[RMDB]
About this RNA
An RNA of 207 nucleotides, treated with DMS and 2A3 and read out base by base. 2A3 is a SHAPE reagent: it acylates the 2'-hydroxyl of flexible nucleotides of all four kinds. The DMS profile rests on 4,771 reads. The reactions ran in a buffer of 150 mM KOAc, 10 mM MgCl2 and 150 mM bicine (pH 8.5), at 24 C. For 2A3, 5,287 sequencing reads were counted. Values cover nucleotides 27 to 156.
RNA sequence: GGGAACGACUCGAGUAGAGUCGAAAAACGCUCAAAGCUUCCACCUGGAGUUGCGAGAAGAGACUAAUCAGGUUAGUCAUUGCUGGGUGCCCUGUCAUACGGCGUUUGCAAUGAUGAAAUUUAAAUAGUAUGAAUAUGAGCGUAGAUAUCCGAGGGGCAUUCACUGUAACUUCGGUUACAGUGAAUGAAAAGAAACAACAACAACAAC
Reactivity to DMS in 0.01 (KOAc 150mM, MgCl2 10mM, bicine 150mM(pH8.5), 24C), signal-to-noise 3, nucleotides 027 to 156: a060c010g000c010u000c010a050a140a190g020c090u010u010c020c040a090c070c040u010g030g000a140g030u000u000g010c080g000a190g010a080a110g010a150g000a110c010u000a030a120u000c050a100g000g020u000u000a300g010u010c010a040u000u000g000c010u000g030g040g020u000g010c000c010c040u000g010u000c080a160u010a040c040g010g020c020g010u030u000u010g020c020a050a000u000g000a030u000g000a110a080a070u020u010u020a020a040a130u010a060g010u000a050u000g000a100a080u000a180u000g000a040g030c020g010u000a060g000a210u000a090u000c010c020g030a090g030g000g010g000
Reactivity to 2A3 in 0.01 (KOAc 150mM, MgCl2 10mM, bicine 150mM(pH8.5), 24C), signal-to-noise 6, nucleotides 027 to 156: a000c000g000c000u010c020a080a100a080g060c070u180u060c110c040a020c000c000u010g020g020a030g020u050u060g080c090g030a110g070a090a030g070a000g020a030c040u090a100a060u100c020a000g010g000u010u050a010g000u010c000a000u010u010g020c030u080g110g240g090u130g000c000c000c010u000g020u000c000a000u000a010c010g000g000c010g020u140u300u090g000c000a000a000u000g000a000u000g010a000a040a030u230u300u140a000a010a000u010a000g000u000a000u000g000a030a020u110a130u130g010a010g000c010g000u020a030g050a120u090a050u070c040c030g030a070g010g000g000g000